[RMDB]
RNA sequence: GGGAACGACUCGAGUAGAGUCGAAAAGAGAUAGACGUAUCCAACCACUUAGACGAAAUCAAGGCGAUACAAUCUGGCGAGAAUGGCGACCCGUUUGAACUCCUCAAGAACUCAAUCGCACCGGGCAUUACGGGUGGCGAGAUCAUGGACCGUAUCACCUUAAGAUGGGUUUCGACCCAUCUUAAGGAAAAGAAACAACAACAACAAC
Reactivity to 2A3 in 0.01 (KOAc 150mM, MgCl2 10mM, bicine 150mM(pH8.5), 24C), signal-to-noise 3, nucleotides 027 to 156: g090a000g000a000u060a030g110a050c060g060u060a020u010c040c060a020a060c000c000a010c080u050u060a040g040a100c010g050a040a030a080u130c050a050a060g060g030c020g060a020u040a120c030a010a070u030c020u020g060g000c050g010a050g040a070a160u110g030g000c000g020a030c020c010c000g030u020u040u050g030a000a020c010u030c020c000u050c070a060a060g030a060a020c020u020c120a060a040u030c040g000c030a040c040c020g020g020g000c040a030u080u120a050c050g070g000g040u020g030g000c010g000a020g010a000u050c020a060u070g030g000a020c050c000g020u020a060u160c070a070
Reactivity to DMS in 0.01 (KOAc 150mM, MgCl2 10mM, bicine 150mM(pH8.5), 24C), signal-to-noise 2, nucleotides 027 to 156: g000a150g020a100u010a040g010a050c080g020u000a120u000c020c030a150a130c000c050a090c100u020u000a090g010a080c110g010a090a110a300u000c080a050a070g020g000c050g030a100u000a080c070a100a060u000c070u000g010g040c080g000a150g010a100a050u010g010g030c030g000a070c030c000c040g000u030u000u000g000a070a050c030u000c010c020u000c090a060a150g010a050a080c100u000c040a080a130u000c060g000c000a070c080c030g000g000g050c040a180u000u010a000c000g030g010g020u000g050g000c010g000a100g040a040u000c060a040u010g010g000a020c050c000g000u030a070u010c090a140